This 177-nucleotide RNA was probed chemically with DMS and 2A3. The RNA was probed in 150 mM KOAc, 10 mM MgCl2 and 150 mM bicine (pH 8.5) at 24 C. For 2A3, 3,992 sequencing reads were counted. High DMS reactivity at an A or C suggests that its Watson-Crick edge is free. DMS adducts were read by reverse transcription with MarathonRT.
[RMDB]
RNA sequence: GGGAACGACUCGAGUAGAGUCGAAAACAAAUUUGACUUAGGCUGUCAAGGUAGACCUAUAGACUGGGAAAUUCCCUCCACAGAUCUCCAACAACCACGGAAUACUAUCUACUUAGAAACACCUAAAGAAUGAACUAGGAUUCGUCCUAGUUCAUUCAAAAGAAACAACAACAACAAC
Reactivity to DMS in 0.01 (KOAc 150mM, MgCl2 10mM, bicine 150mM(pH8.5), 24C), signal-to-noise 3, nucleotides 027 to 126: c080a100a120a120u010u000u000g020a090c100u010u010a050g010g020c120u000g000u020c060a080a120g010g010u000a050g000a080c090c100u000a100u000a040g010a090c100u010g020g000g000a020a070a130u010u010c010c010c010u010c030c020a040c070a070g010a090u010c020u000c060c020a060a030c070a030a060c090c090a060c110g010g000a090a080u010a070c110u010a080u000c050u000a000c030u010u020a060g000a080a100a060c090a050c040c030u000a060a070a140
Reactivity to 2A3 in 0.01 (KOAc 150mM, MgCl2 10mM, bicine 150mM(pH8.5), 24C), signal-to-noise 4, nucleotides 027 to 126: c010a000a080a030u130u090u160g080a030c020u040u060a020g040g080c060u030g050u080c020a020a030g020g000u030a020g040a080c010c020u040a040u050a210g060a040c050u050g020g000g030a030a100a060u060u030c000c000c010u010c000c010a120c020a050g060a120u040c020u000c030c010a050a080c010a050a040c050c030a040c050g010g050a070a030u050a170c020u020a030u030c000u030a040c010u040u030a030g090a030a050a000c030a040c030c000u060a080a090a050